[RMDB]
RNA sequence: GGGAACGACUCGAGUAGAGUCGAAAACCUUUCUGUUAAUUUAAUUCAAAAAAACGUUAAGUUUAGGGACCAAACUAAUACUAAUUAAAUAAGUUAAGGGACCAAACUAAUACUAAUUAAAUAAGUUCUAAGUGAUAAGUUUCGACUUAUCACUUAGAAAAGAAACAACAACAACAAC
Reactivity to 2A3 in 0.01 (KOAc 150mM, MgCl2 10mM, bicine 150mM(pH8.5), 24C), signal-to-noise 1, nucleotides 027 to 126: c000c000u030u110u000c040u130g060u050u120a000a000u000u000u000a010a030u020u050c060a000a000a180a150a060a060a000c070g000u030u020a000a030g020u000u120u240a300g000g000g000a000c000c040a080a000a010c060u000a010a050u040a270c070u020a020a150u250u070a150a170a220u250a070a000g000u060u070a050a190g030g000g000a000c000c000a000a000a000c000u000a000a020u100a020c020u010a000a000u100u050a020a020a020u130a200a040g070u030u040